Source: RMDB library OK3TST, as collected in RNAgym. Structure probing data (2A3) for a 207-nucleotide construct. The reactions ran in a buffer of 150 mM KOAc, 10 mM MgCl2 and 150 mM bicine (pH 8.5), at 24 C.
[RMDB]
RNA sequence: GGGAACGACUCGAGUAGAGUCGAAAAUCUCAAGAAUUUGCACACUGCAAGUCACCAGUGUGCCAUGGUAACGCCUUACCAUGGCAAAUUCGAUUGUGAGUAGGUAAGGCGUUACCUACUCCAUGUUGUCGCAUGAACAUGGCACAAUCAAGAGAAACGUAACUUGCUAGUUCGCUAGCAAGUUACGAAAAGAAACAACAACAACAAC
Reactivity to 2A3 in 0.01 (KOAc 150mM, MgCl2 10mM, bicine 150mM(pH8.5), 24C), signal-to-noise 2, nucleotides 027 to 156: u030c000u000c030a010a020g120a100a110u230u220u300g000c020a000c000a020c000u020g000c150a070a210g140u130c060a010c120c010a040g000u000g010u010g020c000c000a080u020g000g000u000a000a000c010g000c010c000u000u000a000c010c030a010u010g040g030c010a000a070a000u290u160c210g230a180u030u070g010u030g120a180g130u180a050g040g030u000a010a010g000g000c000g000u000u000a000c000c000u000a000c000u010c000c000a010u000g010u000u030g070u050c080g040c200a110u210g030a000a000c000a000u020g030g030c080a020c060a100a160u200c020a000a060g040a000g010a160a020a020